[RMDB]
RNA sequence: GGGAACGACUCGAGUAGAGUCGAAAACGCGGGAUUUACAGAGACGAAGGCGCAGCGUCUCUGAUCUGCGCCACCGCGGAAGCAGAACGAGCUGCCACUCGAAAGUAUGACUUCGGUCAUGCGAAAAGGGAUGGUCGGUCUUCGGACCGACUAUCCCAAAAGAAACAACAACAACAAC
Reactivity to DMS in 0.01 (KOAc 150mM, MgCl2 10mM, bicine 150mM(pH8.5), 24C), signal-to-noise 1, nucleotides 027 to 126: c060g000c000g000g010g070a190u000u060u110a180c000a060g000a090g010a010c000g050a060a030g010g020c060g030c000a080g000c090g020u000c000u000c010u000g000a060u020c000u020g010c030g040c030c070a090c020c010g040c000g000g050a200a080g000c030a000g020a020a110c080g000a000g000c050u000g000c030c040a050c000u020c090g000a240a120a080g020u000a000u010g000a000c000u060u020c130g030g000u030c000a000u000g000c000g020a040a080a160a060
Reactivity to 2A3 in 0.01 (KOAc 150mM, MgCl2 10mM, bicine 150mM(pH8.5), 24C), signal-to-noise 2, nucleotides 027 to 126: c020g000c000g020g010g040a090u050u030u180a060c030a000g050a010g020a040c040g040a150a080g070g000c030g000c040a010g000c020g010u000c010u000c030u050g000a000u030c000u040g010c000g000c000c000a010c000c000g000c070g030g000a000a000g020c030a010g010a040a000c030g030a040g000c020u060g000c010c000a080c020u030c020g050a060a000a000g000u000a010u000g000a010c000u000u000c100g130g010u000c000a000u000g000c010g040a030a020a000a000
Chemical mapping of a 177-nucleotide RNA with DMS and 2A3.
The RNA was probed in 150 mM KOAc, 10 mM MgCl2 and 150 mM bicine (pH 8.5) at 24 C.